The record gives the reactivity of an RNA of 207 nucleotides to 2A3. The reactions ran in a buffer of 150 mM KOAc, 10 mM MgCl2 and 150 mM bicine (pH 8.5), at 24 C. For 2A3 the reverse transcriptase was SuperScript II with manganese. Source: RMDB library OK3TST, as collected in RNAgym.

RNA sequence: GGGAACGACUCGAGUAGAGUCGAAAACGCGAUGGAUACGUCCAUCGCGAAUCCGUCCAAGCCGCGGACGUUAAACUGUGGCACGGUUGUGCCUAGGUGCAACCCUGCUAUGUAUGGCGGCACCCCUGCCCAAGCUACCGUCUACGGACGGUAGCAAUCAUCCGGAUAGGUUCGCCUAUCCGGAUGAAAAAGAAACAACAACAACAAC
Reactivity to 2A3 in 0.01 (KOAc 150mM, MgCl2 10mM, bicine 150mM(pH8.5), 24C), signal-to-noise 1, nucleotides 027 to 156: c030g010c010g000a000u000g000g000a020u040a080c180g070u030c010c000a000u010c000g000c000g000a000a010u000c000c010g020u010c000c000a030a010g000c000c000g000c020g000g000a000c060g000u040u020a010a030a030c050u130g010u020g090g000c000a000c000g030g010u030u010g020u040g000c030c060u130a200g000g160u040g010c000a000a000c000c010c000u010g000c000u000a000u120g150u070a180u100g090g030c000g010g030c000a120c000c020c000c020u040g030c010c030c030a060a030g000c000u000a000c000c000g000u050c010u020a080c300g130g000a000c000g020g000u000a000g020c000a000a000